[RMDB]
RNA sequence: GGGAACGACUCGAGUAGAGUCGAAAAGUGGAUGUGAAUUGUCUAGGAAAUGUAUACAUGUCGCCCGAAGAGUGUUCCCGAUUCAGUUUGACGGAAUUUAAUCGUACGUCUGAGAGUAAUGAAUUGAAAAUAUCGGAUACUUCGGUAUCCGAUAUUUAAAAGAAACAACAACAACAAC
Reactivity to 2A3 in 0.01 (KOAc 150mM, MgCl2 10mM, bicine 150mM(pH8.5), 24C), signal-to-noise 2, nucleotides 027 to 126: g030u030g030g000a060u020g040u040g060a040a240u110u080g030u040c050u070a070g040g110a140a110a050u150g060u080a030u020a100c010a010u050g050u080c010g020c000c060c000g030a100a070g030a020g020u040g010u000u000c000c020c010g000a000u040u050c030a020g060u090u170u140g000a000c000g000g030a030a020u050u050u200a120a040u090c010g030u010a020c010g010u000c010u030g000a080g010a020g100u030a050a250u090g080a030a030u150u070g050a060
Reactivity to DMS in 0.01 (KOAc 150mM, MgCl2 10mM, bicine 150mM(pH8.5), 24C), signal-to-noise 5, nucleotides 027 to 126: g020u000g000g020a040u000g010u000g010a130a080u000u010g010u020c060u010a120g000g000a070a070a050u010g020u010a070u000a080c050a030u000g000u000c030g010c010c010c010g010a090a120g000a060g020u010g000u000u000c000c000c000g010a060u010u000c040a050g010u010u010u010g030a020c020g020g000a110a120u000u000u010a090a110u000c150g010u000a100c030g000u000c000u000g000a100g010a130g010u010a070a090u010g010a060a050u010u010g000a100
Record summary
An RNA of 177 nucleotides, treated with 2A3 and DMS and read out base by base. 2A3 adducts were read by reverse transcription with SuperScript II with manganese. The data come from the RNA Mapping Database (RMDB), library OK2TST. DMS (dimethyl sulfate) methylates the pairing face of unpaired adenines and cytosines. For DMS, 6,466 sequencing reads were counted.